RNA sequence: GGGAACGACUCGAGUAGAGUCGAAAAGGAAAUAAACGGCACCUAUAAGGUGGUGCCGAUCCAGCGUGACCUACCAACACGCAACGAGCAGUCUGGUAUGACUGCAAAGGUAUGGUAAACAAAAAAAAGCAUAACAAUCGUUCGCGAUUGUUAUGCUAAAAGAAACAACAACAACAAC
Reactivity to 2A3 in 0.01 (KOAc 150mM, MgCl2 10mM, bicine 150mM(pH8.5), 24C), signal-to-noise 2, nucleotides 027 to 126: g040g030a030a080a030u160a070a150a040c000g000g000c000a000c000c000u070a100u030a300a100g280g030u080g010g000u000g000c000c000g000a000u000c000c010a000g000c000g030u000g020a090c020c000u010a010c020c000a060a020c000a000c010g020c010a020a040c050g040a040g000c010a000g020u000c010u120g060g120u300a090u170g000a000c000u010g040c000a000a050a000g020g000u110a070u170g010g030u070a090a080a070c140a010a080a010a000a010a000a050
Reactivity to DMS in 0.01 (KOAc 150mM, MgCl2 10mM, bicine 150mM(pH8.5), 24C), signal-to-noise 1, nucleotides 027 to 126: g030g040a080a120a070u010a040a070a230c000g000g000c000a000c000c000u000a160u000a120a160g000g010u010g000g010u000g030c000c000g000a000u000c030c020a270g000c000g020u000g000a070c010c000u030a030c010c000a220a080c030a000c000g000c000a220a030c090g040a210g000c030a020g060u000c000u000g010g010u070a090u000g000a030c000u000g090c010a010a070a100g010g030u010a060u000g040g000u000a040a050a080c160a050a020a010a040a000a070a040
The data come from the RNA Mapping Database (RMDB), library M2PK90. An RNA of 177 nucleotides, treated with 2A3 and DMS and read out base by base. DMS adducts were read by reverse transcription with MarathonRT. For DMS, 878 sequencing reads were counted. For 2A3 the reverse transcriptase was SuperScript II with manganese.